The record gives the reactivity of an RNA of 177 nucleotides to 2A3. 2A3 adducts were read by reverse transcription with SuperScript II with manganese. Reactivities are given for positions 27 through 126. The reactions ran in a buffer of 150 mM KOAc, 10 mM MgCl2 and 150 mM bicine (pH 8.5), at 24 C. For 2A3, 848 sequencing reads were counted. The data come from the RNA Mapping Database (RMDB), library RFM100.
[RMDB]
RNA sequence: GGGAACGACUCGAGUAGAGUCGAAAAGAAAGUCGACAGUCCGCCUCGUCAAGCGGUUCUCAUUUCAUUUUCGUGCGCAUUUAAUGGCGUCUGUUAUUGGCUUUUAACGAGAUUUCCACUCGACUAAACCUGUUGUGCCGUUCGCGGCACAACAGGUAAAAGAAACAACAACAACAAC
Reactivity to 2A3 in 0.01 (KOAc 150mM, MgCl2 10mM, bicine 150mM(pH8.5), 24C), signal-to-noise 3, nucleotides 027 to 126: g040a000a040a000g010u000c030g000a050c000a000g020u000c000c090g030c000c020u130c080g110u090c050a050a010g000c000g040g000u120u010c050u020c010a090u050u210u050c020a120u090u070u020u140c080g050u070g110c040g010c020a030u190u250u100a210a140u210g000g000c000g060u030c010u030g060u020u050a190u070u230g010g000c020u000u000u060u120a090a050c010g010a010g000a060u000u000u060c060c010a010c000u010c000g060a050c090u170a040a000